[RMDB]
Overview: The record gives the reactivity of an RNA of 177 nucleotides to DMS and 2A3. The RNA was probed in 150 mM KOAc, 10 mM MgCl2 and 150 mM bicine (pH 8.5) at 24 C. The data come from the RNA Mapping Database (RMDB), library OK2TRN.
RNA sequence: GGGAACGACUCGAGUAGAGUCGAAAACGUAAUAUGCGCCGUACGGCUAAUGCGCAUAUGCGCUACGUAUACGCGGCAUAUCGCGUAUACGUAGCAUCGAUAUGCUAAUUACGCGGCCGUAAUUAUAACGUUGGAAACACUUCGGUGUUUCCAACGUAAAAGAAACAACAACAACAAC
Reactivity to DMS in 0.01 (KOAc 150mM, MgCl2 10mM, bicine 150mM(pH8.5), 24C), signal-to-noise 2, nucleotides 027 to 126: c060g000u000a030a060u010a020u000g000c160g030c030c000g030u010a110c190g060g010c190u000a010a030u010g010c170g040c000a010u000a000u000g000c260g000c000u000a010c010g000u000a000u010a000c000g000c010g000g030c300a160u000a050u000c040g060c010g000u000a000u000a000c010g000u010a000g000c000a010u000c140g000a020u000a000u000g010c020u000a170a000u000u010a040c070g010c050g000g000c010c020g000u000a030a050u000u000a020u020a080
Reactivity to 2A3 in 0.01 (KOAc 150mM, MgCl2 10mM, bicine 150mM(pH8.5), 24C), signal-to-noise 1, nucleotides 027 to 126: c000g020u040a050a080u090a040u080g030c090g020c040c000g070u100a110c130g110g000c090u030a040a070u050g010c010g010c000a000u000a010u020g010c040g010c010u000a000c020g000u010a000u000a000c000g030c020g040g000c150a130u130a050u280c010g000c020g000u020a010u000a000c000g020u000a010g000c000a000u010c010g040a000u010a010u000g000c010u060a120a000u030u080a030c050g000c000g020g000c030c000g010u000a040a030u070u060a080u030a090